[RMDB]
RNA sequence: GGGAACGACUCGAGUAGAGUCGAAAAGUGGAUAACUUCGGUUAUCCACAAAAAAGAUAUGGAACACUUGUUGGGAGUUCCUGUCGGAAACGACAGAAGAACUUUGAUCAACACUGGUGUUCCUAAGUCAAAAAACUGCUCGAUUCGUCGAGCAGAAUGUCCAUCUUUUGUUCGCAAAAGAUGGACAAAAAGAAACAACAACAACAAC
Reactivity to 2A3 in 0.01 (KOAc 150mM, MgCl2 10mM, bicine 150mM(pH8.5), 24C), signal-to-noise 1, nucleotides 027 to 156: g010u000g000g000a010u000a000a010c000u000u030c080g040g000u020u000a000u020c010c000a010c000a000a000a000a010a000a000g010a010u010a010u050g000g000a000a010c000a000c000u090u050g050u150u030g300g200g110a060g000u010u000c000c000u020g020u000c010g000g010a000a010a000c010g020a000c020a000g100a180a010g000a020a020c040u020u110u250g110a160u270c080a000a030c000a010c000u000g000g000u000g000u000u000c000c000u000a000a000g000u000c000a000a000a000a020a220a070c010u070g010c000u010c000g030a030u050u050c170g040u010c000g160a000g000c000a000g000a000a010
Structure probing data (2A3) for a 207-nucleotide construct. The reactions ran in a buffer of 150 mM KOAc, 10 mM MgCl2 and 150 mM bicine (pH 8.5), at 24 C. For 2A3, 776 sequencing reads were counted. Values are in units of 0.01, from 0 to 300, in steps of 10.